The record gives the reactivity of an RNA of 177 nucleotides to 2A3 and DMS. The RNA was probed in 150 mM KOAc, 10 mM MgCl2 and 150 mM bicine (pH 8.5) at 24 C.
[RMDB]
RNA sequence: GGGAACGACUCGAGUAGAGUCGAAAACGUAGUAAUCGCGCGAAAAUCACGUGAAAUAAUCAGAGGAAUCGUUUGAAAUCAUCGUAGUAAUCGCGCGAAAAUCACGUGAAAUAAUCAGAGGAAUCGUUGAAAAAGGAGUUUUCGAACUCCUUUUUCAAAAAGAAACAACAACAACAAC
Reactivity to 2A3 in 0.01 (KOAc 150mM, MgCl2 10mM, bicine 150mM(pH8.5), 24C), signal-to-noise 2, nucleotides 027 to 126: c000g000u030a000g010u020a090a090u020c000g000c000g010c000g000a050a000a000a030u060c000a000c030g020u000g040a030a030a090u220a060a030u130c070a030g020a020g020g200a070a130u070c050g100u000u070u150g100a080a070a040u040c020a000u130c070g000u000a090g030u010a110a040u030c000g000c000g020c000g000a000a000a000a010u000c000a000c000g000u020g010a000a020a050u240a010a020u130c090a010g050a060g100g140a090a020u140c030g030u010
Reactivity to DMS in 0.01 (KOAc 150mM, MgCl2 10mM, bicine 150mM(pH8.5), 24C), signal-to-noise 4, nucleotides 027 to 126: c000g020u000a030g000u010a060a280u000c010g010c000g030c010g020a020a060a220a100u000c070a000c010g030u010g020a030a120a110u020a110a080u020c020a120g030a010g000g050a150a050u010c040g000u010u020u000g010a040a170a100u010c030a020u020c040g000u010a080g000u000a080a240u000c010g010c000g010c030g000a000a000a110a040u030c060a000c000g000u000g010a070a030a080u010a070a080u010c090a120g000a120g000g010a070a110u030c070g010u000